[RMDB]
RNA sequence: GGGAACGACUCGAGUAGAGUCGAAAAGGCAAGUUGAUAUACUGGCUCUGAUCACGGACUAUUCUGGUGUUGGUGGACACUCUCUCCACAAGUAGGCGCCGUGGAGUUCAUGCUCGUUCUGAACCGGGAAUGGCACAACCCGUAGUAGGAUCUUGCCAUCAGUAUGUGGUUUCGACCACAUACUGAUAAAAGAAACAACAACAACAAC
Reactivity to DMS in 0.01 (KOAc 150mM, MgCl2 10mM, bicine 150mM(pH8.5), 24C), signal-to-noise 2, nucleotides 027 to 156: g000g020c000a050a070g000u000u000g010a130u010a070u000a060c060u010g040g010c020u000c020u020g010a130u010c000a070c060g010g000a120c040u000a120u000u000c040u010g020g000u010g030u000u010g000g040u010g000g010a070c080a120c200u000c100u000c000u010c000c020a060c030a090a200g020u000a160g030g040c060g010c010c050g000u000g020g020a050g000u000u000c020a090u010g020c110u010c040g040u000u010c040u000g000a080a090c150c020g000g000g010a070a100u000g000g060c050a090c060a050a130c000c010c000g030u000a150g010u000a220g000g000a080u000c010u000u050g000c030c060
Reactivity to 2A3 in 0.01 (KOAc 150mM, MgCl2 10mM, bicine 150mM(pH8.5), 24C), signal-to-noise 4, nucleotides 027 to 156: g020g010c030a010a030g030u080u080g200a080u090a040u070a270c070u100g040g020c020u030c060u110g090a080u110c030a010c100g000g010a000c010u010a020u110u040c030u080g040g010u040g030u100u060g090g020u020g030g020a020c030a030c170u150c030u020c010u000c040c000a020c020a070a090g080u080a060g040g070c020g030c060c000g000u020g010g000a010g000u030u090c030a030u060g000c000u030c050g050u070u000c010u020g020a020a010c020c010g010g000g060a090a110u140g150g000c070a030c030a100a090c020c000c010g010u000a000g010u000a000g030g000a040u040c010u030u000g020c020c010
This 207-nucleotide RNA was probed chemically with DMS and 2A3.
The RNA was probed in 150 mM KOAc, 10 mM MgCl2 and 150 mM bicine (pH 8.5) at 24 C.
The 2A3 profile rests on 3,609 reads.
For DMS, 4,108 sequencing reads were counted.